Chemical mapping of a 177-nucleotide RNA with DMS and 2A3. The reactions ran in a buffer of 150 mM KOAc, 10 mM MgCl2 and 150 mM bicine (pH 8.5), at 24 C. The 2A3 profile rests on 11,093 reads. Values cover nucleotides 27 to 126. 2A3 adducts were read by reverse transcription with SuperScript II with manganese.
[RMDB]
RNA sequence: GGGAACGACUCGAGUAGAGUCGAAAAGAUAUGGACCCAUGGGAUCAUGAGCGUUCUUUGAUCUCGGAAACGAGGGAGAACCCAUGUGAAAAUGGGUCCUAAGUCAAAACGAGGGUUCGCCCUCGAAGGUAAUGAAAUGGUUCGCCAUUUCAUUACCAAAAGAAACAACAACAACAAC
Reactivity to DMS in 0.01 (KOAc 150mM, MgCl2 10mM, bicine 150mM(pH8.5), 24C), signal-to-noise 5, nucleotides 027 to 126: g010a050u010a300u010g000g000a020c010c010c010a010u010g000g010g000a110u000c010a000u000g000a100g020c160g010u000u000c000u010u000u030g000a070u000c010u000c000g010g000a090a090a160c010g010a020g010g000g000a020g010a020a020c000c000c000a000u010g000u000g000a140a090a190a000u000g000g010g010u000c000c000u000a000a060g000u000c030a070a060a100a140c040g010a030g000g000g020u000u000c230g010c000c000c000u000c000g010a040a070
Reactivity to 2A3 in 0.01 (KOAc 150mM, MgCl2 10mM, bicine 150mM(pH8.5), 24C), signal-to-noise 4, nucleotides 027 to 126: g020a020u070a060u130g010g000a010c000c000c000a010u020g000g010g040a020u000c010a010u030g100a050g300c180g060u040u000c030u150u240u080g110a120u030c020u000c000g000g020a080a080a010c000g010a000g000g010g010a010g010a000a000c020c000c000a010u040g020u010g050a000a020a000a010u000g000g030g000u000c000c000u000a000a000g010u010c010a000a010a050a050c040g000a010g020g010g000u050u110c160g220c020c010c000u000c010g010a020a020

For DMS the reverse transcriptase was MarathonRT.